[RMDB]
RNA sequence: GGGAACGACUCGAGUAGAGUCGAAAAGUGCUGCCGUGAUGCGGUCUUCGCAAGGACCGCAACAUGAAGGUACGAUGCUUUUGUGUCGUGCUUCUUGUUUCUGGCACGUUGUGUCUUCACGCAGACAUCCAGGUAUAAAUUUCGAUUUAUACCUGGAAAAAGAAACAACAACAACAAC
Reactivity to 2A3 in 0.01 (KOAc 150mM, MgCl2 10mM, bicine 150mM(pH8.5), 24C), signal-to-noise 9, nucleotides 027 to 126: g210u180g030c010u010g070c110c030g010u010g000a020u070g000c000g000g000u000c010u110u110c150g090c150a080a100g030g000a000c000c000g000c000a000a000c000a000u020g050a040a010g060g010u020a000c000g000a010u020g010c020u100u230u240u300g020u010g010u010c000g000u000g010c000u010u010c000u020u020g030u020u060u040c080u060g010g000c010a010c060g210u140u290g000u000g000u000c000u010u020c020a010c010g000c000a000g010a020c000a020
Reactivity to DMS in 0.01 (KOAc 150mM, MgCl2 10mM, bicine 150mM(pH8.5), 24C), signal-to-noise 9, nucleotides 027 to 126: g010u020g010c010u000g000c080c060g030u000g000a030u010g010c010g010g010u000c000u000u010c280g020c300a140a130g000g000a010c000c000g020c010a010a010c000a000u010g000a070a030g010g010u010a000c010g010a010u000g000c010u000u010u010u020g040u000g010u000c000g010u000g000c000u000u000c020u000u000g000u000u000u010c130u010g000g000c010a010c020g030u020u020g010u000g010u000c000u010u000c040a020c030g000c020a010g000a030c030a150

Notes
This 177-nucleotide RNA was probed chemically with 2A3 and DMS. For 2A3 the reverse transcriptase was SuperScript II with manganese. Conditions: 150 mM KOAc, 10 mM MgCl2 and 150 mM bicine (pH 8.5), 24 C.